[RMDB]
RNA sequence: GGGAACGACUCGAGUAGAGUCGAAAAGAUAUGGAACUGUGGCGUACAGCUUUGAUCUAAGUUCGGAAACGAACUUAGGGAGCUGUGAUCCACUGGUUCCUAAGUCAAAGUGGCGUUCGCGCCACAACCAUUUCUACUGGUUCGCCAGUAGAAAUGGAAAAGAAACAACAACAACAAC
Reactivity to 2A3 in 0.01 (KOAc 150mM, MgCl2 10mM, bicine 150mM(pH8.5), 24C), signal-to-noise 2, nucleotides 027 to 126: g030a020u080a040u170g000g000a010a000c020u020g010u010g040g020c050g030u150a020c030a010g000c000u300u240u050g040a040u040c010u010a020a010g010u020u010c010g030g020a070a120a040c010g000a010a000c000u000u000a000g010g000g000a010g000c000u000g000u020g010a020u030c010c000a010c030u010g010g000u000u010c010c000u010a140a030g060u020c070a210a070a070g020u010g020g020c050g040u080u140c300g000c020g000c140c000a000c000a000a010
Reactivity to DMS in 0.01 (KOAc 150mM, MgCl2 10mM, bicine 150mM(pH8.5), 24C), signal-to-noise 3, nucleotides 027 to 126: g010a060u010a300u000g000g010a000a000c030u000g040u010g000g000c240g010u010a020c010a000g010c010u010u010u030g000a050u030c000u000a000a020g000u000u010c000g000g010a070a070a230c000g020a010a000c000u000u000a000g020g000g010a000g030c000u000g010u000g000a050u000c010c000a010c010u010g040g000u000u000c000c000u000a040a110g000u000c030a070a160a150g020u000g000g000c010g010u010u010c230g030c010g020c000c010a000c010a030a150
The data come from the RNA Mapping Database (RMDB), library TTRDES.
The record gives the reactivity of an RNA of 177 nucleotides to 2A3 and DMS.
High 2A3 reactivity points to a flexible backbone, as in loops and unpaired stretches.
For 2A3 the reverse transcriptase was SuperScript II with manganese.
The 2A3 profile rests on 11,051 reads.